[RMDB]
RNA sequence: GGGAACGACUCGAGUAGAGUCGAAAACAGGUAUUUUCUUAAUUCAGCCCCAUGAUCAAAGGAGUUUACUAAGCUUUGAAGUUAACAUCAUGUGUUGUGUGAUUUGAAAUUAGCUAGUUAACACUAACCUACUCCUAGUGUUCGCACUAGGAGUAGGAAAAGAAACAACAACAACAAC
Reactivity to 2A3 in 0.01 (KOAc 150mM, MgCl2 10mM, bicine 150mM(pH8.5), 24C), signal-to-noise 1, nucleotides 027 to 126: c090a030g060g040u030a130u090u090u040u000c000u020u120a120a110u120u100c010a030g050c020c000c000c000a020u090g010a050u050c000a010a120a000g090g000a060g030u000u030u070a150c070u050a130a000g020c040u000u080u110g030a060a020g070u070u180a050a190c030a050u070c000a010u050g090u020g070u150u210g010u090g030u020g030a040u000u070u040g000a000a060a070u060u040a010g060c030u030a000g020u040u010a020a000c000a010c030u050a030a040
Reactivity to DMS in 0.01 (KOAc 150mM, MgCl2 10mM, bicine 150mM(pH8.5), 24C), signal-to-noise 3, nucleotides 027 to 126: c090a050g020g000u030a000u010u000u000u000c030u000u020a050a120u010u000c060a170g000c050c060c080c010a050u000g010a040u000c120a040a120a110g020g010a070g020u000u000u010a040c140u000a080a060g030c010u000u010u010g010a130a090g010u010u010a050a070c190a070u010c030a030u000g020u020g020u010u010g010u000g020u000g010a080u010u000u000g010a040a030a060u000u010a010g000c010u000a040g020u000u000a100a100c080a040c100u010a070a140

The record gives the reactivity of an RNA of 177 nucleotides to 2A3 and DMS. The RNA was probed in 150 mM KOAc, 10 mM MgCl2 and 150 mM bicine (pH 8.5) at 24 C.